RNA sequence: GGGAACGACUCGAGUAGAGUCGAAAAGCACUCACCAACAUCCCGGUCUGGGCGGCGACUAUCUCCAUCAAUACGCCGCGAGGAGCAGGAAGUGAAAUCCCAAACGCCAUGAUUGCCGGAAUUGUCUCAAAUGGAAGAUAGAUCAGUCCCAUCGCAGACAAGAUAGCACUUUCGAGUGCUAUCUUGUAAAAGAAACAACAACAACAAC
Reactivity to 2A3 in 0.01 (KOAc 150mM, MgCl2 10mM, bicine 150mM(pH8.5), 24C), signal-to-noise 4, nucleotides 027 to 156: g040c010a020c080u060c020a090c030c020a060a130c020a110u060c000c020c020g050g040u040c040u070g030g150g000c010g010g020c020g040a090c080u080a070u130c090u070c060c050a150u090c060a060a080u110a140c030g000c010c000g020c000g020a020g000g000a030g020c050a040g020g030a060a020g030u050g060a070a020a070u050c000c000c000a070a120a020c040g010c010c020a030u070g010a100u030u140g020c030c010g000g050a060a070u080u080g030u030c030u000c080a060a110a040u060g060g020a020a030g020a030u110a010g110a070u060c010a010g080u040c050c020c000a050u120c060g030c120a020g010
Reactivity to DMS in 0.01 (KOAc 150mM, MgCl2 10mM, bicine 150mM(pH8.5), 24C), signal-to-noise 2, nucleotides 027 to 156: g020c060a060c020u000c040a100c030c020a120a090c050a220u010c000c010c000g040g050u010c030u000g000g000g000c010g070g000c030g010a180c070u040a030u000c050u010c020c130a070u000c120a070a090u000a060c020g130c020c000g000c070g000a300g030g000a050g020c030a110g020g020a150a180g030u010g020a040a140a100u000c010c030c020a120a120a090c050g000c050c050a090u000g010a150u000u030g030c000c090g000g010a130a040u000u000g010u010c020u000c010a060a060a090u000g010g010a080a040g010a060u000a060g000a110u010c040a020g030u000c010c010c020a100u020c070g010c080a200g010
Structure probing data (2A3 and DMS) for a 207-nucleotide construct. The data come from the RNA Mapping Database (RMDB), library OK3TST. The RNA was probed in 150 mM KOAc, 10 mM MgCl2 and 150 mM bicine (pH 8.5) at 24 C.